[RMDB]
Source: RMDB library OK3TST, as collected in RNAgym. An RNA of 207 nucleotides, treated with 2A3 and read out base by base. The RNA was probed in 150 mM KOAc, 10 mM MgCl2 and 150 mM bicine (pH 8.5) at 24 C.

RNA sequence: GGGAACGACUCGAGUAGAGUCGAAAACUGUGGGAGGCCAAGAAGGGUGAAUGACUUGAGCUGAAGAUCAGCUUGGACCACAGAGCAAAACCCUGCCUCUACUAAAAAUACGAAAACUAGCUGGGUGUGCACAUCUGUAGUCCUGGCUACUUGGGAAGUUUUAAUCGGGUUUCGACCCGAUUAAAACAAAAGAAACAACAACAACAAC
Reactivity to 2A3 in 0.01 (KOAc 150mM, MgCl2 10mM, bicine 150mM(pH8.5), 24C), signal-to-noise 1, nucleotides 027 to 156: c050u060g000u060g170g020g030a020g030g000c000c060a100a020g140a020a000g020g050g000u060g030a080a050u050g020a050c060u090u050g000a010g000c000u050g050a050a000g040a060u140c010a000g010c010u060u040g000g010a000c020c000a030c070a040g020a000g000c000a020a130a040a100c010c000c010u000g020c000c000u080c050u050a050c010u120a190a050a000a050a050u120a140c110g050a020a010a140a070c060u060a030g000c020u010g010g000g000u030g090u070g090c020a040c020a240u070c040u020g000u000a000g020u000c000c010u020g000g000c000u040a010c030u010u030g060g030g010a140a170